[RMDB]
RNA sequence: GGGAACGACUCGAGUAGAGUCGAAAACGUGAACAUCGCUCUGCUAAGUCCCGUCGUUCUUCCAGUCAGAGCGAGAUUGUAAGCAACCUUAUGCGCAAUGAAGACAUAGAGGGACUUCUACAUAAAGGCGUAAUACUAUGUUCGCAUAGUAUUACGCAAAAGAAACAACAACAACAAC
Reactivity to DMS in 0.01 (KOAc 150mM, MgCl2 10mM, bicine 150mM(pH8.5), 24C), signal-to-noise 5, nucleotides 027 to 126: c140g010u020g000a110a110c150a100u000c000g010c000u000c010u020g000c180u020a070a060g000u000c020c020c020g000u010c070g010u000u010c020u010u030c000c100a100g000u010c030a010g020a040g010c020g020a020g000a060u010u030g010u000a070a130g010c030a090a140c100c060u020u010a060u010g030c050g000c060a080a060u020g000a080a060g000a100c080a090u010a070g020a080g010g000g010a070c030u010u020c180u000a060c110a080u030a040a060a100g010
Reactivity to 2A3 in 0.01 (KOAc 150mM, MgCl2 10mM, bicine 150mM(pH8.5), 24C), signal-to-noise 9, nucleotides 027 to 126: c050g110u130g120a050a010c020a120u010c010g010c000u000c000u020g060c060u080a060a010g040u030c030c020c000g080u060c020g010u020u030c010u060u020c010c000a050g100u130c000a000g010a000g010c030g000a010g010a020u010u050g030u070a100a050g000c020a050a090c030c010u140u150a060u130g040c070g010c030a030a070u140g040a110a050g030a040c040a060u180a030g120a050g030g010g000a000c000u020u020c060u120a140c040a110u270a130a090a020g160